This 207-nucleotide RNA was probed chemically with DMS and 2A3. For 2A3, 1,076 sequencing reads were counted. The data come from the RNA Mapping Database (RMDB), library OK3TST.
RNA sequence: GGGAACGACUCGAGUAGAGUCGAAAAGGAUAAACCGAAGCUGUACUAAGAUGACUACUUAGAAGGAGUUACAACCUCAAACAAAAAAAAGUUGUAGUGAGAAGUUAGGCAAACAAAAGAGAUGCUUUUAUAGUUGACUCUCUUGGGAAAAACUAUACUCACUUAAAGAAUUCGUUCUUUAAGUGAGAAAAGAAACAACAACAACAAC
Reactivity to DMS in 0.01 (KOAc 150mM, MgCl2 10mM, bicine 150mM(pH8.5), 24C), signal-to-noise 1, nucleotides 027 to 156: g020g050a190u000a090a050a200c060c000g010a150a200g020c050u020g000u020a190c000u030a080a110g000a210u000g030a160c040u000a080c010u000u000a160g020a100a130g040g010a260g030u020u000a080c000a050a090c010c000u000c080a050a040a220c090a010a030a010a120a020a070a110a110g000u000u000g000u030a090g020u000g010a140g000a070a090g010u050u050a050g060g010c050a070a020a090c020a050a060a010a020g010a110g000a260u000g010c040u030u000u000u010a140u000a090g000u000u010g040a110c020u000c010u000c010u010u000g000g000g000a040a030a050a080a080c010u000a070u000a130
Reactivity to 2A3 in 0.01 (KOAc 150mM, MgCl2 10mM, bicine 150mM(pH8.5), 24C), signal-to-noise 2, nucleotides 027 to 156: g010g000a090u090a070a090a040c060c030g010a030a030g030c040u020g020u090a030c010u060a050a070g020a090u100g020a040c020u030a030c030u110u080a020g030a080a040g050g020a030g010u030u040a070c020a060a050c040c020u080c040a040a190a050c140a090a060a040a080a020a010a030a000g010u010u000g020u040a040g030u040g040a060g010a120a040g020u050u090a020g010g030c020a050a110a020c020a040a120a060a000g020a010g010a040u050g000c000u000u050u020u200a140u060a090g000u000u050g020a070c000u030c020u010c050u080u090g020g040g010a030a060a090a010a000c020u130a020u170a050